The record gives the reactivity of an RNA of 177 nucleotides to DMS.
RNA sequence: GGGAACGACUCGAGUAGAGUCGAAAAGAUAUGGAAGAGCAGGAGGAAUUUCUUGUUCUACCCACCUCGGUAUCGGAAACGAUACACGAGAGGAACAAGAAAUUCCUCCUGUAGUCUUCCUAAGUCACUAAGACAUGGGGUUCGCCCCAUGUCUUAGAAAAGAAACAACAACAACAAC
Reactivity to DMS in 0.01 (KOAc 150mM, MgCl2 10mM, bicine 150mM(pH8.5), 24C), signal-to-noise 1, nucleotides 027 to 126: g020a060u000a300u000g040g010a020a010g030a000g020c000a010g020g050a020g020g000a010a000u000u000u000c000u000u010g000u000u000c000u000a090c070c110c160a300c150c000u000c010g000g000u000a000u000c010g020g000a080a080a260c020g000a000u000a020c000a150c030g000a020g000a110g020g000a010a010c020a040a010g000a020a020a020u000u000c000c000u000c010c010u020g020u000a010g030u010c010u020u020c000c010u000a040a050g000u000c020a290